[RMDB]
RNA sequence: GGGAACGACUCGAGUAGAGUCGAAAAACCUGGAGCGAACUGCAAAAAAGGACGGUGGGGAGUGCCCAGCGGCCGACAGGAGUAAUUCCCGCCGAAACAGGGUUUUCACCCUUCCUUUCUUCGGGUGUCCUUCCUCGCGCCCGCAGGACCACCCCUCGAUUACUGAAACGUUCGCGUUUCAGUAAUCAAAAGAAACAACAACAACAAC
Reactivity to 2A3 in 0.01 (KOAc 150mM, MgCl2 10mM, bicine 150mM(pH8.5), 24C), signal-to-noise 1, nucleotides 027 to 156: a020c040c020u060g060g040a050g070c010g030a070a080c020u080g020c110a030a110a090a070a030a030g060g040a030c100g000g060u060g010g010g000g000a100g050u140g090c000c000c020a050g000c010g010g000c030c000g030a040c180a070g000g010a010g010u010a010a020u080u020c000c000c000g030c010c020g020a030a040a060c300a160g060g010g000u110u060u270u270c090a090c000c010c010u000u010c000c000u000u000u000c000u040u030c010g000g030g000u000g020u030c000c000u020u010c000c000u030c000g020c010g020c040c000c010g000c020a010g000g020a000c040c000a060c030c020c000c000u020c040